[RMDB]
RNA sequence: GGGAACGACUCGAGUAGAGUCGAAAAGUCGCUCUGGCCGUGGUCGUACAUGAGGGCGGUGACAUCCCCCUCCUUGUCCCCCGCGUAAACGCCCCCGGCGGCGCGUCCCCGGGGGUUGCAGGGCCGGGGGGGAAUAAUUGUUCGCAAUUAUUCCCCCAAAAGAAACAACAACAACAAC
Reactivity to 2A3 in 0.01 (KOAc 150mM, MgCl2 10mM, bicine 150mM(pH8.5), 24C), signal-to-noise 4, nucleotides 027 to 126: g080u080c030g010c010u020c030u050g210g080c020c000g020u030g010g040u100c060g010u080a030c000a050u050g030a020g050g030g070c210g000g040u090g090a030c020a180u290c010c010c000c000c000u020c000c080u050u070g020u050c000c000c000c010c000g000c020g050u120a100a110a040c030g010c000c010c000c000c010g040g000c130g050g000c180g070c070g080u210c000c020c000c010g000g000g000g000g010u000u010g000c000a010g010g000g000c000c030g060g020
Reactivity to DMS in 0.01 (KOAc 150mM, MgCl2 10mM, bicine 150mM(pH8.5), 24C), signal-to-noise 2, nucleotides 027 to 126: g070u000c050g000c000u000c010u010g000g010c160c000g020u030g020g000u010c070g010u010a010c020a050u000g000a010g000g000g030c130g000g010u000g010a190c260a090u010c010c000c010c000c000u040c020c090u000u010g000u030c020c060c090c070c060g040c020g010u080a040a090a110c170g000c000c000c000c040c000g000g000c120g020g040c050g010c180g000u050c010c020c020c000g010g010g000g040g030u000u010g010c000a030g010g010g000c050c090g000g020
Structure probing data (2A3 and DMS) for a 177-nucleotide construct. Values cover nucleotides 27 to 126. It was measured as part of the RMDB library OK1LIB. For 2A3, 3,871 sequencing reads were counted. Conditions: 150 mM KOAc, 10 mM MgCl2 and 150 mM bicine (pH 8.5), 24 C. For 2A3 the reverse transcriptase was SuperScript II with manganese.